RNA sequence: GGGAACGACUCGAGUAGAGUCGAAAAGAUAUGGAUUCUUGUGGCACUGAUGACCUCGGAAACGAGCAAGGUGCACACGGGAAUCCUAAGUCAAAGCAAGUUACUUAGUUCGCUAAGUAACUUGCAAGAUGAUCACCUCGUUCGCGAGGUGAUCAUCAAAAGAAACAACAACAACAAC
Reactivity to 2A3 in 0.01 (KOAc 150mM, MgCl2 10mM, bicine 150mM(pH8.5), 24C), signal-to-noise 1, nucleotides 027 to 126: g030a020u080a030u110g010g070a000u030u030c000u030u010g000u000g030g070c020a020c000u080g030a260u180g040a220c000c010u000c030g000g030a120a050a020c020g010a000g020c030a060a130g040g000u020g000c050a060c000a000c090g030g050g020a000a000u010c000c000u000a080a010g030u050c060a110a000a000g000c000a000a000g000u000u020a010c010u000u010a020g050u060u100c280g030c260u010a010a000g000u000a000a000c000u010u000g000c000a000a010
Reactivity to DMS in 0.01 (KOAc 150mM, MgCl2 10mM, bicine 150mM(pH8.5), 24C), signal-to-noise 1, nucleotides 027 to 126: g010a030u000a300u000g000g060a000u000u000c000u010u010g000u000g000g000c010a010c000u010g000a140u000g010a150c300c000u010c000g000g000a180a050a120c000g000a000g030c000a020a170g010g010u000g040c030a100c000a010c030g000g000g000a000a000u010c000c010u010a000a130g000u000c010a130a090a280g030c000a000a000g000u000u010a000c000u010u000a000g010u000u030c300g010c000u000a000a000g010u000a000a000c000u000u010g010c020a010a060
This 177-nucleotide RNA was probed chemically with 2A3 and DMS. The data come from the RNA Mapping Database (RMDB), library TTRDEL. Conditions: 150 mM KOAc, 10 mM MgCl2 and 150 mM bicine (pH 8.5), 24 C. The DMS profile rests on 899 reads. For DMS the reverse transcriptase was MarathonRT.